[RMDB]
RNA sequence: GGGAACGACUCGAGUAGAGUCGAAAAGGUGCUCGGUGGCUCGUCGUCCAUGAACGCAAUGAUGUGGGUGCGUGGAUUCGCAUCAGACUACGAUGAGUGGGCCGCGCGAGCCGGUCCGCGGUGGUCGUGAAGAGCAUAAGUUCGCUUAUGCUCUUCAAAAAGAAACAACAACAACAAC
Reactivity to 2A3 in 0.01 (KOAc 150mM, MgCl2 10mM, bicine 150mM(pH8.5), 24C), signal-to-noise 6, nucleotides 027 to 126: g110g010u120g010c020u020c020g020g020u030g000g000c010u010c010g040u010c010g020u000c020c020a080u100g050a090a020c050g020c120a050a170u140g040a050u080g040u060g070g020g030u070g040c080g060u090g070g140a080u110u030c010g000c010a010u010c010a020g070a050c080u110a030c050g300a300u050g010a020g090u060g020g000g000c030c040g020c010g040c010g000a000g000c000c010g010g020u020c000c000g020c020g040g030u080g000g040u050c050g030
Reactivity to DMS in 0.01 (KOAc 150mM, MgCl2 10mM, bicine 150mM(pH8.5), 24C), signal-to-noise 9, nucleotides 027 to 126: g010g020u000g000c020u000c020g020g010u010g000g010c010u000c020g010u010c070g010u000c020c050a060u000g000a140a110c080g010c090a090a130u000g010a060u000g020u000g010g010g020u000g010c110g010u000g010g010a060u000u000c030g010c010a010u000c010a060g000a120c090u010a090c080g010a080u010g000a210g020u000g010g000g010c040c060g020c090g010c030g000a020g000c030c020g010g000u000c020c020g010c080g000g010u000g000g010u000c050g010
Structure probing data (2A3 and DMS) for a 177-nucleotide construct. The data come from the RNA Mapping Database (RMDB), library OK2TRN. The reactions ran in a buffer of 150 mM KOAc, 10 mM MgCl2 and 150 mM bicine (pH 8.5), at 24 C. 2A3 adducts were read by reverse transcription with SuperScript II with manganese.